The record gives the reactivity of an RNA of 207 nucleotides to 2A3. It was measured as part of the RMDB library OK3TST. The 2A3 profile rests on 262 reads.
[RMDB]
RNA sequence: GGGAACGACUCGAGUAGAGUCGAAAACUAUUUUUAGACCGUAUUGAAAUUUUGGUUACUGUUGAUGGUGUCAAUUUUAGCACUAAAUAUGUGGUGCCUGGUGUCACCUUUGGUAAACAAAUUGGCAGUGCAUUUUGUGAUUUUGUUAAUGUCACCACACUGUUGCUACGUUCGCGUAGCAACAGUGAAAAGAAACAACAACAACAAC
Reactivity to 2A3 in 0.01 (KOAc 150mM, MgCl2 10mM, bicine 150mM(pH8.5), 24C), signal-to-noise 1, nucleotides 027 to 156: c000u000a210u020u140u070u070u270a010g060a100c040c010g100u110a090u080u110g070a090a060a110u140u210u040u120g000g040u070u050a030c110u170g070u000u000g000a130u070g000g050u060g070u070c130a150a080u070u070u090u170a000g000c010a000c080u040a040a040a110u240a100u150g030u040g050g010u000g000c000c010u020g020g000u070g110u040c000a040c000c000u000u060u080g070g000u070a140a000a000c000a000a060a000u080u040g050g000c060a110g080u010g000c100a110u050u030u080u030g080u000g060a170u000u000u130u210g150u060u080a060a010u060g040u010c030a000c100c000a000